[RMDB]
RNA sequence: GGGAACGACUCGAGUAGAGUCGAAAAACAGCGGCGGACCUCCUGCCGCCGUGAGAGUUCAGGCUCACCAGAGUGGAGCGGAGGCCAGAGACAGCACAGACGCGUCAGAAGACGGACGAGGGGAAACUAAUCCAGUAGUGUUCGCACUACUGGAUUAAAAAGAAACAACAACAACAAC
Reactivity to DMS in 0.01 (KOAc 150mM, MgCl2 10mM, bicine 150mM(pH8.5), 24C), signal-to-noise 5, nucleotides 027 to 126: a080c050a270g010c030g010g010c020g000g000a110c080c020u000c030c010u010g000c010c000g010c000c030g030u000g000a110g010a090g000u020u010c140a120g000g010c020u000c030a080c050c070a120g000a090g010u000g010g010a070g040c090g000g000a060g000g000c040c050a050g030a110g020a070c050a030g000c040a040c040a070g000a090c080g000c050g020u000c030a070g010a080a100g000a080c070g000g020a050c030g000a060g000g020g010g010a090a040a060c140
Reactivity to 2A3 in 0.01 (KOAc 150mM, MgCl2 10mM, bicine 150mM(pH8.5), 24C), signal-to-noise 5, nucleotides 027 to 126: a010c030a010g000c010g020g000c000g010g010a060c000c020u070c020c000u070g060c010c000g000c000c000g010u060g020a110g020a000g000u080u160c070a070g030g020c010u020c030a050c010c010a040g050a040g110u090g040g030a050g020c030g010g020a040g020g000c020c000a030g010a000g020a070c020a030g020c040a040c010a070g070a030c040g010c010g020u020c020a060g040a240a050g040a080c050g000g020a010c020g020a050g000g030g010g010a030a030a060c050